The record gives the reactivity of an RNA of 207 nucleotides to 2A3 and DMS. The data come from the RNA Mapping Database (RMDB), library M2RFPK. The reactions ran in a buffer of 150 mM KOAc, 10 mM MgCl2 and 150 mM bicine (pH 8.5), at 24 C. For 2A3, 3,077 sequencing reads were counted.
RNA sequence: GGGAACGACUCGAGUAGAGUCGAAAAGACUGCUGUAGAGUUCGGUUGGAGCGACAAGUAUUUAGCUUGAGAUAGCUAAAUCACCUCGGUAUGAUUAGGGUGAGACCUAGGAACCGUAGGGGUAUUCAAUGCUGUAUUGCGUUCGCGCAAUACAGAACUAUGAUGGCUGAUUCGUCAGCCAUCAUAGAAAAGAAACAACAACAACAAC
Reactivity to 2A3 in 0.01 (KOAc 150mM, MgCl2 10mM, bicine 150mM(pH8.5), 24C), signal-to-noise 2, nucleotides 027 to 156: g020a010c070u090g010c000u030g110u100a030g020a000g050u090u060c030g000g000u020u070g020g020a040g040c050g100a070c040a140a000g050u130a070u010u010u000a000g010c010u010u020g030a040g010a080u110a020g020c000u000a000a010a010u000c000a010c010c000u030c010g020g000u300a230u140g030a050u030u050a020g000g030g000u050g090a100g050a060c000c000u020a000g000g020a010a010c010c000g010u050a060g000g020g000g010u020a080u050u150c090a080a080u150g040c000u000g000u000a000u000u000g010c010g020u030u050c260g010c000g000c050a000a000u000a000c000a000g000a010a000
Reactivity to DMS in 0.01 (KOAc 150mM, MgCl2 10mM, bicine 150mM(pH8.5), 24C), signal-to-noise 2, nucleotides 027 to 156: g020a090c040u000g000c010u000g000u000a070g010a150g000u010u000c030g000g010u000u000g040g010a090g020c030g010a080c050a030a080g010u000a050u000u000u010a020g010c010u000u000g000a230g010a120u000a010g010c010u010a000a000a070u000c030a040c020c000u000c010g020g020u000a100u020g000a200u000u000a060g000g020g040u010g030a270g010a170c010c020u000a030g030g000a130a070c020c020g030u000a070g020g000g000g040u000a030u000u000c040a070a070u010g030c010u000g030u020a010u000u010g010c020g030u000u000c260g020c010g040c000a040a010u000a000c000a000g000a020a140